[RMDB]
Structure probing data (DMS) for a 177-nucleotide construct. The data come from the RNA Mapping Database (RMDB), library OK2TST.
RNA sequence: GGGAACGACUCGAGUAGAGUCGAAAAUUACUCCCCAUUCCAGAGUUGGUCCCUUUCAGAUUAACUAGAGAUAUCGUUGAUGGAUUUGGAGUCACAGGCGUGGAUGGCCUAUUCAGGCGGAGUUGUACCCAGUAUCACGAUUCGUCGUGAUACUGGGAAAAGAAACAACAACAACAAC
Reactivity to DMS in 0.01 (KOAc 150mM, MgCl2 10mM, bicine 150mM(pH8.5), 24C), signal-to-noise 1, nucleotides 027 to 126: u000u050a170c170u000c020c020c000c030a120u000u000c030c030a180g000a110g020u020u010g000g010u000c010c010c030u000u060u020c110a100g010a090u010u010a040a090c100u000a100g000a100g000a070u000a050u010c060g000u010u030g010a120u010g000g000a090u000u010u020g000g000a130g010u000c060a070c080a060g000g000c100g050u000g010g020a110u010g000g000c020c020u000a190u000u000c090a000g010g020c000g010g010a070g010u000u010g010u000a100
DMS adducts were read by reverse transcription with MarathonRT.